[RMDB]
Structure probing data (DMS and 2A3) for a 177-nucleotide construct. Source: RMDB library OK2TRN, as collected in RNAgym. For 2A3 the reverse transcriptase was SuperScript II with manganese. For DMS, 15,758 sequencing reads were counted. DMS adducts were read by reverse transcription with MarathonRT.
RNA sequence: GGGAACGACUCGAGUAGAGUCGAAAAGUCUCAGUCAGUCUCUCACACACACUGACUCAGUGAGUCUGUCUGUGACAGUGAGUCUGACUGUCAGAGUCACAGUGUCACAGACACAGUGUCAGUCUGAACCAAAAGACCUAUUCGUAGGUCUUUUGGUAAAAGAAACAACAACAACAAC
Reactivity to DMS in 0.01 (KOAc 150mM, MgCl2 10mM, bicine 150mM(pH8.5), 24C), signal-to-noise 9, nucleotides 027 to 126: g010u000c010u000c010a120g010u000c030a030g010u000c040u000c030u000c070a100c070a140c090a090c120a070c070u000g010a050c030u000c030a150g010u020g000a050g010u000c060u000g010u000c030u000g010u000g010a030c060a080g010u000g000a030g000u000c010u000g010a270c190u010g010u000c010a010g000a030g000u000c010a010c010a140g010u000g010u000c010a040c060a050g000a010c000a030c130a050g010u000g010u000c090a070g010u000c030u010g000a130
Reactivity to 2A3 in 0.01 (KOAc 150mM, MgCl2 10mM, bicine 150mM(pH8.5), 24C), signal-to-noise 5, nucleotides 027 to 126: g020u010c000u000c040a010g100u020c020a000g020u010c010u000c010u020c070a040c000a000c000a000c010a010c110u040g080a080c010u020c050a160g170u100g130a030g030u010c030u070g030u000c010u010g010u020g020a030c020a020g010u010g010a020g120u000c010u020g010a080c030u020g070u050c000a010g010a020g090u020c000a010c020a080g180u030g000u070c000a030c020a190g020a010c010a010c000a000g020u010g030u010c020a020g060u000c020u040g020a020